[RMDB]
RNA sequence: GGGAACGACUCGAGUAGAGUCGAAAAUCGGUGGGGUUCGCCCCACCGAAAAGAGAGAAGUGAGAGAGUCGUCAGUGAACGAAAGUGCGAUCCCACGCCACAAAAGAUGCGGCUUCGGCCGCAUCAAGCAUGUCAUUUUGUUCGCAAAAUGACAUGCAAAAGAAACAACAACAACAAC
Reactivity to DMS in 0.01 (KOAc 150mM, MgCl2 10mM, bicine 150mM(pH8.5), 24C), signal-to-noise 1, nucleotides 027 to 126: u000c060g020g050u000g010g010g010g020u000u000c300g000c010c010c010c010a000c000c030g000a000a010a030a050g020a180g000a040g020a170a040g000u020g000a020g000a210g020a040g010u000c000g000u010c100a080g010u000g000a080a040c070g010a100a030a070g020u000g000c030g010a100u000c000c020c000a120c010g020c050c000a080c240a110a070a130a110g000a000u000g020c070g020g000c000u010u000c250g030g000c020c010g000c000a000u000c000a030a070
Background
An RNA of 177 nucleotides, treated with DMS and read out base by base. For DMS, 687 sequencing reads were counted. DMS adducts were read by reverse transcription with MarathonRT. The RNA was probed in 150 mM KOAc, 10 mM MgCl2 and 150 mM bicine (pH 8.5) at 24 C.